[RMDB]
RNA sequence: GGGAACGACUCGAGUAGAGUCGAAAAUAUUCGUUACCUACGCAAUGGUUUGUCUGCGGAAUUGCUGACCUCUGCACUGUUUUUACUGGAUGCGGGCUUACCAGAAGUGAAUGAUGCUUACAGAGAAAUUCAAAGUGUCGUUCGCGACACUUUGAAUAAAAGAAACAACAACAACAAC
Reactivity to DMS in 0.01 (KOAc 150mM, MgCl2 10mM, bicine 150mM(pH8.5), 24C), signal-to-noise 1, nucleotides 027 to 126: u000a130u000u000c060g020u000u010a110c030c060u000a140c160g020c070a100a120u000g000g000u000u000u000g020u010c040u010g000c000g030g010a100a060u000u020g000c130u010g010a080c060c050u000c050u000g000c020a130c020u000g010u000u010u020u020u020a120c110u020g000g010a140u010g020c050g040g000g000c020u020u010a030c040c030a060g010a120a120g030u000g000a090a040u010g000a040u010g010c040u010u020a080c080a060g020a080g010a040a080